[RMDB]
Chemical mapping of a 177-nucleotide RNA with DMS and 2A3. The 2A3 profile rests on 1,795 reads. For 2A3 the reverse transcriptase was SuperScript II with manganese.
RNA sequence: GGGAACGACUCGAGUAGAGUCGAAAAAAAGGUGUUCAAAUUGAAUAUGCAAGUUUAGUUCAAUUUACUGAGUGGAUGUUAGAACUUAAUAAAUCAGGAAAUAAACAACAAUGGCUUAACCAAGCGCUGUUGCAGUCUUAUUCGUAAGACUGCAACAAAAAGAAACAACAACAACAAC
Reactivity to DMS in 0.01 (KOAc 150mM, MgCl2 10mM, bicine 150mM(pH8.5), 24C), signal-to-noise 3, nucleotides 027 to 126: a050a020a110g020g000u010g010u010u000c020a040a080a110u010u030g000a080a020u020a070u010g000c070a100a050g030u000u020u020a000g010u000u000c010a080a020u000u000u010a030c070u010g010a020g000u000g000g010a040u020g010u000u020a110g010a080a030c050u000u000a030a000u040a020a070a020u020c110a050g000g000a020a040a040u030a010a040a030c060a070a040c260a030a040u010g020g000c000u000u020a120a130c160c050a070a050g010c100g000c240
Reactivity to 2A3 in 0.01 (KOAc 150mM, MgCl2 10mM, bicine 150mM(pH8.5), 24C), signal-to-noise 3, nucleotides 027 to 126: a000a000a000g110g010u120g020u090u040c090a060a090a050u040u000g040a020a010u110a060u160g130c140a060a080g050u010u200u220a060g010u010u030c010a020a040u120u020u120a090c030u020g020a020g060u100g050g090a040u050g060u100u100a080g050a060a000c030u040u050a010a060u070a100a170a010u090c020a000g040g150a090a100a000u220a060a120a080c070a020a010c000a040a040u120g040g000c000u030u030a010a000c050c000a050a000g010c060g000c080

Values are in units of 0.01, from 0 to 300, in steps of 10. For DMS, 3,901 sequencing reads were counted.